[RMDB]
Source information:
The data come from the RNA Mapping Database (RMDB), library TTRDES. An RNA of 177 nucleotides, treated with 2A3 and DMS and read out base by base. The 2A3 profile rests on 15,030 reads. For DMS, 13,998 sequencing reads were counted. The RNA was probed in 150 mM KOAc, 10 mM MgCl2 and 150 mM bicine (pH 8.5) at 24 C.
RNA sequence: GGGAACGACUCGAGUAGAGUCGAAAAGAUAUGGAGGAGCGAUGUGACAUGCUGAUGGAUCGGAAACGAUCCUGCCAGCAACAGCACAUUCGCUCCUCCUAAGUCAAAACGCUGCUUCGGCAGCGAACUAACGUUAACUGUUCGCAGUUAACGUUAGAAAAGAAACAACAACAACAAC
Reactivity to 2A3 in 0.01 (KOAc 150mM, MgCl2 10mM, bicine 150mM(pH8.5), 24C), signal-to-noise 2, nucleotides 027 to 126: g020a010u060a020u120g020g010a010g000g000a000g010c020g010a020u010g030u000g060a170c060a170u120g020c010u010g000a040u040g000g000a000u000c000g030g030a030a050a060c000g000a000u000c010c000u000g030c030c000a000g040c010a020a030c050a050g110c010a000c000a000u060u050c000g010c000u000c010c000u000c000c000u000a000a010g000u000c000a000a000a010a050c040g000c000u010g010c010u050u050c170g120g000c000a000g000c000g000a010a010
Reactivity to DMS in 0.01 (KOAc 150mM, MgCl2 10mM, bicine 150mM(pH8.5), 24C), signal-to-noise 8, nucleotides 027 to 126: g000a050u000a300u000g010g010a020g020g010a010g020c000g010a020u000g010u000g010a070c110a250u000g000c000u000g010a260u000g000g010a010u000c000g000g010a110a080a260c010g000a000u000c010c000u000g000c200c010a000g010c000a020a070c280a130g000c010a020c000a030u010u000c000g010c000u000c010c000u000c000c010u000a010a100g000u000c040a070a050a140a190c030g010c000u000g010c000u010u010c240g020g000c010a000g010c000g000a020a130